RNA sequence: GGGAACGACUCGAGUAGAGUCGAAAACUAAGGUGGGAGGAUCACUUGAUCCUGGGAGGUCAAGGCUGCAGUGAGCCCUGACUGUGCCACUGUAUGCCAGCCUGGGUGACAAAGCAAGACUCCAUCUUAGAGAGUAAGGGUUCGCCCUUACUCUCUAAAAAGAAACAACAACAACAAC
Reactivity to 2A3 in 0.01 (KOAc 150mM, MgCl2 10mM, bicine 150mM(pH8.5), 24C), signal-to-noise 2, nucleotides 027 to 126: c010u030a050a030g040g020u070g040g170g090a080g050g030a110u000c000a010c060u030u060g010a000u000c020c010u000g000g040g000a100g060g130u190c100a070a070g020g030c000u000g000c010a010g000u000g040a070g010c000c040c020u140g180a210c110u050g060u110g030c000c000a020c000u000g030u030a030u300g000c000c010a010g020c030c000u000g040g010g000u020g010a030c050a070a260a000g070c040a120a000g010a030c010u030c010c000a020u030c010u010
Reactivity to DMS in 0.01 (KOAc 150mM, MgCl2 10mM, bicine 150mM(pH8.5), 24C), signal-to-noise 2, nucleotides 027 to 126: c030u000a030a020g050g040u000g010g020g010a020g000g000a110u000c080a170c050u020u000g020a160u000c000c000u000g000g010g000a140g000g000u030c150a080a130g000g000c020u000g000c030a020g000u000g000a120g000c010c040c060u020g000a060c180u000g010u000g010c000c010a040c010u010g000u020a000u020g020c020c010a080g010c010c000u010g010g020g020u000g000a300c300a040a060a050g000c110a050a050g020a100c010u000c020c000a030u010c010u000